[RMDB]
RNA sequence: GGGAACGACUCGAGUAGAGUCGAAAAGAGGGUUAUGCGCCGUGAUUCCAUGGAAUAAGGAGCGUUUAGGGGCCAGGUUAUUAAGCGACGAGGGGUGAAAUCUGGUGACUCGCUUAGGAGCAACAGAUCAAUACAGUGCUUUCGAGCACUGUAUUGAAAAAGAAACAACAACAACAAC
Reactivity to 2A3 in 0.01 (KOAc 150mM, MgCl2 10mM, bicine 150mM(pH8.5), 24C), signal-to-noise 7, nucleotides 027 to 126: g090a020g030g040g010u120u140a070u140g040c050g000c020c020g060u040g050a120u070u040c040c020a060u180g080g070a080a040u120a180a120g060g010a040g030c030g010u060u090u120a020g000g020g010g000c030c030a000g020g040u010u020a080u070u090a090a030g030c020g040a060c030g000a070g000g030g000g010u050g030a050a040a020u020c010u020g020g040u030g100a140c000u010c030g060c040u090u090a050g110g000a010g020c010a000a050c010a030g040a030
Reactivity to DMS in 0.01 (KOAc 150mM, MgCl2 10mM, bicine 150mM(pH8.5), 24C), signal-to-noise 6, nucleotides 027 to 126: g010a080g010g010g010u010u020a040u020g010c050g020c030c020g000u020g010a090u010u000c040c050a120u020g010g010a080a050u010a110a170g010g020a060g010c030g010u000u010u020a090g010g000g010g000c070c050a060g000g000u020u010a080u020u010a060a100g030c060g000a060c060g010a080g010g010g000g010u020g010a040a080a070u030c020u010g000g010u010g000a080c200u010c020g010c090u010u030a060g010g000a070g000c070a050a050c090a040g010a080